RNA sequence: GGGAACGACUCGAGUAGAGUCGAAAAUUAAUCCGGCUUUAAGUUGACGAGGGCAGGGUUUAACGAGACAUCGGCGGGUGCCCUGCGGUCUUCCUGCGACCGUUAGAGGACUGGUAAACCAAUUUAAGAUUCAACCUACUUUCGAGUAGGUUGAAUCAAAAGAAACAACAACAACAAC
Reactivity to DMS in 0.01 (KOAc 150mM, MgCl2 10mM, bicine 150mM(pH8.5), 24C), signal-to-noise 1, nucleotides 027 to 126: u000u010a100a150u010c070c010g030g010c040u020u010u000a050a110g010u010u010g000a080c090g000a030g000g000g020c040a040g020g010g020u000u010u000a050a070c080g000a080g010a140c040a080u000c050g000g010c050g010g000g010u000g010c020c010c010u000g010c030g000g000u000c010u010u010c070c000u010g010c110g040a060c010c060g000u000u010a000g010a070g000g000a100c060u000g020g000u020a030a060a140c040c050a100a090u000u000u010a070a130